This 177-nucleotide RNA was probed chemically with 2A3. For 2A3, 598 sequencing reads were counted. The reactions ran in a buffer of 150 mM KOAc, 10 mM MgCl2 and 150 mM bicine (pH 8.5), at 24 C.
RNA sequence: GGGAACGACUCGAGUAGAGUCGAAAAUACUACUGAAGAAGACACCAUUCCAGUGGACCACUGUGACCUAAGAAGCAUUCAGCCAUCAUGAUGUGGCCUUUACCUCCACUCCUGUCCUUUCUACCCAUAGACUAUCGGCGUUCGCGCCGAUAGUCUAAAAAGAAACAACAACAACAAC
Reactivity to 2A3 in 0.01 (KOAc 150mM, MgCl2 10mM, bicine 150mM(pH8.5), 24C), signal-to-noise 2, nucleotides 027 to 126: u100a020c100u000a070c040u070g000a040a000g000a050a070g040a010c000a050c090c000a010u100u000c000c000a000g020u070g030g030a060c000c100a070c080u090g020u100g070a000c010c010u120a120a060g000a140a000g010c060a040u040u080c070a000g050c060c000a060u090c020a050u210g000a110u180g040u000g050g010c030c000u070u270u110a110c000c000u000c120c010a050c000u000c000c000u000g120u130c000c000u000u010u050c040u050a130c000c000c110a010